[RMDB]
RNA sequence: GGGAACGACUCGAGUAGAGUCGAAAAGAUAUGGAUCCCUAGUUCUCGAUAAGCAGUGGUCGGAAACGACCAUACUGCUUUUGACGAGAACUGGGAUCCUAAGUCAAAGCGAUACUUCGGUAUCGCACGCACGUGGAUAGUUCGCUAUCCACGUGCGAAAAGAAACAACAACAACAAC
Reactivity to DMS in 0.01 (KOAc 150mM, MgCl2 10mM, bicine 150mM(pH8.5), 24C), signal-to-noise 1, nucleotides 027 to 126: g060a010u000a300u010g000g000a000u000c000c010c010u000a030g030u000u000c000u010c000g010a170u000a000a010g000c050a020g070u000g000g000u010c000g010g010a190a020a240c020g010a010c010c000a020u010a010c030u000g000c000u030u000u000u000g000a190c090g030a020g010a000a000c000u000g000g000g010a000u000c000c000u030a000a030g010u010c020a060a100a160g020c010g050a010u020a000c000u000u000c270g020g000u000a000u010c000g000c000a020
The record gives the reactivity of an RNA of 177 nucleotides to DMS. DMS adducts were read by reverse transcription with MarathonRT. Reactivities are given for positions 27 through 126. The RNA was probed in 150 mM KOAc, 10 mM MgCl2 and 150 mM bicine (pH 8.5) at 24 C.